Structure probing data (DMS and 2A3) for a 207-nucleotide construct. The 2A3 profile rests on 1,072 reads. It was measured as part of the RMDB library RNAMAK. The RNA was probed in 150 mM KOAc, 10 mM MgCl2 and 150 mM bicine (pH 8.5) at 24 C.
RNA sequence: GGGAACGACUCGAGUAGAGUCGAAAACAUACGUUUCGACGUAUGCGUUUGGGGUCUUCACGAAGAGCCUUUUGACGCUCUGAAGCCUCCACGGAGCGAUAAGGAACUACUCUUCGAUGAAGACGGAGGCACCCUACACGCCACCUUCGGGUGGCAAAAAUACUCCCCAGUUCGCUGGGGAGUAUUUAAAAGAAACAACAACAACAAC
Reactivity to DMS in 0.01 (KOAc 150mM, MgCl2 10mM, bicine 150mM(pH8.5), 24C), signal-to-noise 1, nucleotides 027 to 156: c000a040u000a000c000g020u000u000u020c260g000a120c010g030u000a000u010g020c020g000u000u000u000g030g010g010g040u000c010u010u000c010a060c060g010a030a010g020a060g020c000c050u000u000u000u010g010a200c060g000c010u020c010u020g030a000a100g000c070c000u000c010c010a300c040g040g010a030g030c000g010a140u000a090a090g030g020a150a100c130u000a120c000u010c000u010u000c000g010a130u010g010a040a020g030a050c060g020g030a040g050g000c000a090c020c010c020u010a110c200a130c080g010c000c000a030c000c000u010u000c300g030g050g040u010g000g060c000a000a000
Reactivity to 2A3 in 0.01 (KOAc 150mM, MgCl2 10mM, bicine 150mM(pH8.5), 24C), signal-to-noise 2, nucleotides 027 to 156: c010a020u000a000c000g020u040u090u100c120g190a030c010g000u000a010u040g020c030g070u090u140u220g020g010g000g030u010c000u000u000c000a000c000g000a000a000g000a010g040c000c000u010u050u100u130g200a080c090g000c000u020c000u020g030a050a000g000c010c000u020c030c020a050c040g000g020a000g000c010g030a050u020a060a040g010g020a020a110c050u100a120c060u300c020u000u000c010g220a250u060g000a020a000g010a000c000g000g000a000g000g000c020a000c010c000c000u040a050c100a020c170g000c000c000a030c000c000u090u190c260g080g000g000u020g000g000c030a010a010